[RMDB]
RNA sequence: GGGAACGACUCGAGUAGAGUCGAAAAGUGACACUGUUCGCAGUGUCACAAAGUGGUGGAUCUAGAAGCACAAUAACUAGAUCAAAGAUCUAGUCUAGAUCAAAAGCAUACAGUUCGCUGUAUGCAAGCUACAGUAAGUCUUCGGACUUACUGUAGCAAAAGAAACAACAACAACAAC
Reactivity to 2A3 in 0.01 (KOAc 150mM, MgCl2 10mM, bicine 150mM(pH8.5), 24C), signal-to-noise 4, nucleotides 027 to 126: g010u000g000a000c000a000c000u010g030u060u110c170g020c120a000g000u010g000u020c000a000c000a000a010a000g170u170g040g120u110g110g000a000u000c010u010a010g030a090a030g140c090a040c050a230a100u170a130a030c020u020a000g000a020u010c010a040a270a050g000a010u010c000u000a000g040u000c010u010a000g000a000u010c010a000a090a010a040g010c000a000u000a000c000a000g010u030u060c150g050c090u000g000u010a010u000g020c000a010a010
Reactivity to DMS in 0.01 (KOAc 150mM, MgCl2 10mM, bicine 150mM(pH8.5), 24C), signal-to-noise 4, nucleotides 027 to 126: g040u000g010a020c000a000c000u000g030u000u010c210g050c020a020g010u010g000u000c000a000c010a030a060a110g000u000g000g020u010g000g000a010u000c010u000a010g020a150a150g000c150a090c230a080a080u020a110a140c010u000a010g010a010u000c010a120a140a130g000a030u000c000u000a020g000u000c020u000a010g000a010u000c010a060a060a070a110g000c000a000u000a000c000a020g010u000u020c260g020c010u000g000u000a000u010g010c000a050a050
This 177-nucleotide RNA was probed chemically with 2A3 and DMS. The DMS profile rests on 4,445 reads. The data come from the RNA Mapping Database (RMDB), library M2PK50. 2A3 adducts were read by reverse transcription with SuperScript II with manganese. High DMS reactivity at an A or C suggests that its Watson-Crick edge is free. The RNA was probed in 150 mM KOAc, 10 mM MgCl2 and 150 mM bicine (pH 8.5) at 24 C.